This 177-nucleotide RNA was probed chemically with DMS and 2A3. Conditions: 150 mM KOAc, 10 mM MgCl2 and 150 mM bicine (pH 8.5), 24 C.
[RMDB]
RNA sequence: GGGAACGACUCGAGUAGAGUCGAAAAGAAUCAUUGAACGCCAUCAGGCCAAAUGAUUUUUACCGUUGCAUCAUGUCGCCCAAUAUGAUGCUUGCUCGUACCAGGCCCCUGCAAUUUCAACAGGGGCUACGUCUGUCACUUUCGAGUGACAGACGUAAAAAGAAACAACAACAACAAC
Reactivity to DMS in 0.01 (KOAc 150mM, MgCl2 10mM, bicine 150mM(pH8.5), 24C), signal-to-noise 3, nucleotides 027 to 126: g020a000a000u010c000a000u000u000g030a140a260c300g000c020c000a170u070c200a170g020g000c000c080a110a000a020u000g000a000u000u010u000u000u010a100c110c120g000u050u020g000c000a000u010c020a010u000g010u000c030g020c010c000c030a130a050u000a000u010g010a020u000g000c000u030u010g010c100u020c050g020u010a090c180c080a160g000g000c000c000c000c000u000g000c010a080a050u020u010u000c150a120a200c000a010g000g000g000g010c000
Reactivity to 2A3 in 0.01 (KOAc 150mM, MgCl2 10mM, bicine 150mM(pH8.5), 24C), signal-to-noise 3, nucleotides 027 to 126: g070a000a020u020c020a000u010u050g090a160a130c090g000c000c020a190u260c260a300g010g000c000c000a000a070a050u010g000a000u000u040u020u010u110a070c000c040g060u090u180g030c000a000u000c000a000u000g040u050c100g040c040c030c000a070a000u060a020u000g000a000u010g000c000u000u180g000c050u030c080g100u120a110c030c010a120g020g080c010c000c000c000u040g010c070a160a290u080u180u190c040a090a050c000a000g000g020g010g000c000

About this RNA:
Source: RMDB libraries RFM100 and RFMREP, as collected in RNAgym. For 2A3 the reverse transcriptase was SuperScript II with manganese.